[RMDB]
RNA sequence: GGGAACGACUCGAGUAGAGUCGAAAAAAUGGGAACUCCCUUCCUCCUGCAGCAGCCUGCCUGCAGCUGUCCUGGUAGAACAGUGUGGACAUUGCAGAAGCUGUCACUGCCCCAGAAAGAAAGCACCGUAUAGAACGCAGUUCGCUGCGUUCUAUACAAAAGAAACAACAACAACAAC
Reactivity to 2A3 in 0.01 (KOAc 150mM, MgCl2 10mM, bicine 150mM(pH8.5), 24C), signal-to-noise 2, nucleotides 027 to 126: a000a000u160g010g040g030a080a060c060u090c050c020c000u030u000c020c010u060c010c020u050g030c000a010g010c000a010g010c000c020u100g030c030c010u010g000c010a030g020c050u010g010u000c010c030u060g060g100u180a070g040a230a010c010a080g100u070g060u050g210g010a030c040a070u010u010g000c000a030g000a050a000g020c000u020g000u100c070a020c120u060g000c000c010c020c000a040g130a040a110a010g080a040a060a000g000c020a010c110c070
Reactivity to DMS in 0.01 (KOAc 150mM, MgCl2 10mM, bicine 150mM(pH8.5), 24C), signal-to-noise 2, nucleotides 027 to 126: a050a030u000g000g020g030a130a110c200u030c010c040c010u000u000c020c010u000c100c030u010g020c070a080g000c060a030g000c080c060u000g040c150c000u000g020c000a040g000c100u000g020u000c000c000u000g000g030u010a140g010a110a170c060a040g000u010g000u000g010g010a070c010a020u030u000g030c000a040g020a170a090g000c010u000g000u010c040a090c050u000g000c030c000c060c020a080g000a060a080a080g000a100a070a070g020c070a070c130c090
Chemical mapping of a 177-nucleotide RNA with 2A3 and DMS. It was measured as part of the RMDB library RFMREP. DMS adducts were read by reverse transcription with MarathonRT. The 2A3 profile rests on 1,419 reads. The RNA was probed in 150 mM KOAc, 10 mM MgCl2 and 150 mM bicine (pH 8.5) at 24 C.